Chemical mapping of a 207-nucleotide RNA with DMS and 2A3. The DMS profile rests on 1,499 reads. The reactions ran in a buffer of 150 mM KOAc, 10 mM MgCl2 and 150 mM bicine (pH 8.5), at 24 C. The 2A3 profile rests on 665 reads. The data come from the RNA Mapping Database (RMDB), library OK3TST.
RNA sequence: GGGAACGACUCGAGUAGAGUCGAAAACUGAAGCGCAAGCAGCAGGGCGUUUGGAAGGCGAAAGGCCUGGCGCUAAUCUGCGACGACAAAGAAGGCGAGUACGCCGCCCGGUUGCGCAUGGCGCAGGUUGACGCUAAUUCCGGCGUCGGAAACACGACAGUAUGCAGCUUUUCGAAGCUGCAUACUGAAAAGAAACAACAACAACAAC
Reactivity to DMS in 0.01 (KOAc 150mM, MgCl2 10mM, bicine 150mM(pH8.5), 24C), signal-to-noise 1, nucleotides 027 to 156: c050u000g000a110a220g000c010g030c050a070a180g040c010a100g060c060a070g000g020g050c010g000u000u000u010g130g010a070a200g020g000c020g040a060a070a050g020g020c000c000u000g080g020c020g020c010u010a050a140u000c100u020g000c000g010a120c040g000a070c040a060a090a120g000a110a080g040g000c000g000a150g000u000a180c100g040c040c040g020c000c000c010g040g000u000u030g020c000g000c130a230u000g000g010c010g030c010a020g020g020u010u000g010a300c020g000c000u020a010a300u000u000c060c000g050g000c000g020u000c000g000g000a150a100a130c080a060c000g020a210
Reactivity to 2A3 in 0.01 (KOAc 150mM, MgCl2 10mM, bicine 150mM(pH8.5), 24C), signal-to-noise 1, nucleotides 027 to 156: c020u000g030a030a080g000c000g020c050a130a290g040c040a030g010c050a050g060g010g010c040g060u040u260u300g000g010a030a000g000g000c000g020a160a140a030g100g000c000c000u060g050g010c000g000c000u080a120a110u050c060u040g000c010g070a130c020g000a000c040a100a210a080g050a090a040g090g020c010g000a030g200u100a040c170g110c100c010g000c000c000c000g060g000u000u000g000c010g000c000a010u020g000g000c010g000c000a000g000g070u040u080g010a010c010g000c000u090a170a110u020u000c000c000g000g000c020g000u000c000g000g040a070a070a010c020a000c150g110a000